[RMDB]
The record gives the reactivity of an RNA of 177 nucleotides to 2A3 and DMS. The DMS profile rests on 1,105 reads. DMS adducts were read by reverse transcription with MarathonRT. The reactions ran in a buffer of 150 mM KOAc, 10 mM MgCl2 and 150 mM bicine (pH 8.5), at 24 C. Source: RMDB library OK2TRN, as collected in RNAgym. High 2A3 reactivity points to a flexible backbone, as in loops and unpaired stretches.
RNA sequence: GGGAACGACUCGAGUAGAGUCGAAAACUGCAAUGGUGGCGUGCACAGCUUGUCGUCCGCAAGGGUGUCCACAUUGGUAUCGACAGCUACUCCGCAUUUUUUGAAAAUGACCAUUGCACGCCGACGAGCGUGCUGGUGGUUUCGACCACCAGCACGCAAAAGAAACAACAACAACAAC
Reactivity to 2A3 in 0.01 (KOAc 150mM, MgCl2 10mM, bicine 150mM(pH8.5), 24C), signal-to-noise 2, nucleotides 027 to 126: c020u040g040c040a030a150u110g030g030u040g040g000c020g000u010g000c010a050c010a060g030c000u110u160g030u010c010g030u070c030c000g000c070a020a050g050g060g020u110g110u080c020c010a060c000a180u140u210g080g000u150a070u230c030g000a020c010a000g030c010u050a020c030u010c090c050g020c020a000u020u000u030u020u120u260g210a040a060a040a040u020g030a080c000c030a070u000u050g000c000a000c020g000c010c010g080a120c030g040a000
Reactivity to DMS in 0.01 (KOAc 150mM, MgCl2 10mM, bicine 150mM(pH8.5), 24C), signal-to-noise 1, nucleotides 027 to 126: c050u000g000c090a090a010u000g010g010u020g020g000c260g040u000g000c030a070c250a040g030c020u000u010g030u000c000g000u010c110c030g000c140a090a080g000g000g040u000g000u010c030c080a090c120a160u000u020g000g000u020a110u000c020g020a010c040a070g000c010u000a090c090u000c070c110g030c000a020u000u020u000u000u030u010g000a020a020a000a010u000g010a080c010c040a060u000u010g000c000a000c000g020c000c020g010a040c170g000a150